Structure probing data (2A3 and DMS) for a 207-nucleotide construct. For 2A3 the reverse transcriptase was SuperScript II with manganese.
RNA sequence: GGGAACGACUCGAGUAGAGUCGAAAAUGGGUGAAAAAAUGGAUGAUUUGAAUUCUUCAAUUGUUAGUUUGCUUCAGGAACUUUCAACCCUGCAAUCAGUAGCCGAAAAUACACAAUCUUCGAUCGUUCAAAUGACUUCUGAAAUCAAAAACCUAGACGUUUUACGAUUAUUCGUAAUCGUAAAACGAAAAGAAACAACAACAACAAC
Reactivity to 2A3 in 0.01 (KOAc 150mM, MgCl2 10mM, bicine 150mM(pH8.5), 24C), signal-to-noise 3, nucleotides 027 to 156: u130g020g000g000u060g110a110a010a040a000a010a010u070g030g070a040u040g010a020u070u090u190g040a090a080u130u060c030u110u030c050a050a130u070u050g030u070u040a080g010u030u030u090g020c020u020u070c030a060g030g040a090a070c000u100u160u000c100a070a080c010c000c000u010g010c020a020a100u070c040a040g040u050a020g050c020c020g110a110a110a000a000u130a010c040a000c020a050a070u050c020u080u050c070g070a090u070c020g010u060u000c000a010a060a130u050g040a080c020u040u010c010u120g050a080a100a050u090c040a030a080a090a060a060c000c020u040a030g030a170
Reactivity to DMS in 0.01 (KOAc 150mM, MgCl2 10mM, bicine 150mM(pH8.5), 24C), signal-to-noise 1, nucleotides 027 to 156: u010g040g010g040u000g000a010a020a090a150a050a090u000g020g000a050u010g000a070u010u030u000g010a160a210u000u010c010u010u010c080a160a090u010u010g010u000u000a010g000u010u010u000g000c110u000u010c050a150g040g000a120a080c030u000u000u020c040a070a100c050c000c020u010g090c070a110a130u000c060a030g040u000a040g030c010c030g030a080a050a040a090u020a100c120a030c070a100a140u020c080u040u000c040g030a090u010c030g030u030u000c040a040a110a090u000g030a050c030u000u000c010u000g020a050a050a040u010c030a030a120a070a100a070c070c040u010a190g000a210
Source information
DMS adducts were read by reverse transcription with MarathonRT.